[RMDB]
RNA sequence: GGGAACGACUCGAGUAGAGUCGAAAAAUAAAGCGUAAUCGCAUCCCAGUAGCAAAGAGCAGCGUAAAGGCGAAAGCCGAACUCAUGAUCGCAUCGGGCUAAGAUGCGAUCGUAGCCACGCAAAAAACAUAUCCUUAUCGUUCGCGAUAAGGAUAUGAAAAGAAACAACAACAACAAC
Reactivity to DMS in 0.01 (KOAc 150mM, MgCl2 10mM, bicine 150mM(pH8.5), 24C), signal-to-noise 7, nucleotides 027 to 126: a090u010a070a080a090g020c020g020u010a110a130u010c060g020c020a150u000c010c010c010a140g010u010a090g010c100a070a060a100g000a090g020c060a090g000c040g010u010a050a090a160g010g000c000g010a100a060a160g010c000c010g000a070a080c060u000c100a050u000g000a010u000c000g010c000a010u000c000g020g010g030c210u010a080a120g000a000u000g000c000g000a000u000c000g020u000a030g000c120c130a050c090g030c040a000a030a060a040a050a080
Reactivity to 2A3 in 0.01 (KOAc 150mM, MgCl2 10mM, bicine 150mM(pH8.5), 24C), signal-to-noise 5, nucleotides 027 to 126: a000u130a010a090a020g010c010g050u080a130a080u240c030g000c010a020u030c010c000c020a000g110u090a010g000c070a060a160a050g080a060g050c100a020g000c040g050u080a070a080a060g020g000c000g040a040a020a000g000c000c020g010a020a000c020u070c070a030u080g000a000u000c000g000c000a000u010c020g070g120g040c040u090a090a020g000a000u000g000c000g000a000u000c010g000u000a000g010c020c030a020c010g020c000a000a070a030a030a030a000